[RMDB]
RNA sequence: GGGAACGACUCGAGUAGAGUCGAAAAGAACACGCGCACCGCGCGCGGCACGGCGGUCAGCGCGUCGCCGACGUCGAGCGCGAGCGCGCGCCAUGCGUUGCGAUCGAGCUCCGCCUCGAGCACCUCAGCCAUUAAUCAGCUUCGGCUGAUUAAUGGCAAAAGAAACAACAACAACAAC
Reactivity to 2A3 in 0.01 (KOAc 150mM, MgCl2 10mM, bicine 150mM(pH8.5), 24C), signal-to-noise 1, nucleotides 027 to 126: g030a050a000c060a010c000g010c000g000c000a030c080c000g030c020g000c010g000c000g050g000c010a000c010g020g000c020g000g040u050c000a100g300c110g020c070g180u040c000g000c000c000g080a150c120g020u030c020g020a010g000c010g000c010g000a000g010c040g000c000g030c010g000c030c020a140u230g030c070g140u100u110g030c010g100a140u030c000g000a030g030c010u020c120c060g190c080c000u040c010g000a000g010c030a070c020c010u090c050a000
Reactivity to DMS in 0.01 (KOAc 150mM, MgCl2 10mM, bicine 150mM(pH8.5), 24C), signal-to-noise 2, nucleotides 027 to 126: g020a120a190c140a110c020g040c010g020c020a060c020c000g030c000g000c010g010c010g030g050c030a060c000g020g010c010g000g010u000c080a170g040c220g010c100g030u000c000g040c010c020g020a060c110g000u000c020g010a010g010c000g020c000g020a070g030c030g000c000g000c000g020c080c110a090u000g000c070g010u010u010g000c020g010a200u000c010g000a050g010c030u020c080c100g000c070c020u010c020g000a060g000c040a070c060c050u000c060a220